[RMDB]
RNA sequence: GGGAACGACUCGAGUAGAGUCGAAAACAUUACGAAUUCAGUCGCAAAUUGUAGAAUUAGCUACUCUACGAUUUAGUGAGCGUUAGUAACGUGGUAAUAUAAUAUAGUCUUUGGAAGGAUUAUAUUGGAGCCGCGGACAAGUUCGCUUGUCCGCGAAGAUAAGUAAUCCCUUCGGGGAUUACUUAUCAAAAGAAACAACAACAACAAC
Reactivity to DMS in 0.01 (KOAc 150mM, MgCl2 10mM, bicine 150mM(pH8.5), 24C), signal-to-noise 1, nucleotides 027 to 156: c030a090u000u020a070c000g010a060a080u010u000c030a140g000u000c010g010c000a020a020a020u010u010g010u000a010g020a030a060u000u000a280g010c220u000a060c080u000c000u010a030c000g010a010u000u000u000a110g000u010g000a060g030c120g000u000u010a030g020u000a000a000c020g020u010g000g010u010a030a150u010a130u000a010a030u010a020u000a020g020u000c000u000u000u010g000g010a180a230g000g000a020u010u000a020u000a000u000u000g020g010a210g030c080c020g060c010g000g010a000c010a010a030g020u000u010c300g000c000u000u000g010u000c010c000g030c020g000a000a030
Reactivity to 2A3 in 0.01 (KOAc 150mM, MgCl2 10mM, bicine 150mM(pH8.5), 24C), signal-to-noise 4, nucleotides 027 to 156: c020a050u090u160a020c030g070a090a130u150u120c070a070g080u020c010g000c000a000a010a000u010u000g000u010a000g010a020a020u050u030a030g020c050u080a020c010u000c000u010a000c000g000a010u000u010u130a070g000u040g040a070g070c020g020u050u110a030g010u080a010a040c040g010u040g030g020u080a050a120u110a110u030a130a020u000a000u010a020g000u000c030u070u090u120g150g030a120a060g020g000a010u030u000a000u010a010u010u030g050g060a060g060c050c010g000c010g000g000a000c000a000a000g010u050u080c140g020c150u000u000g000u000c000c000g000c000g000a000a000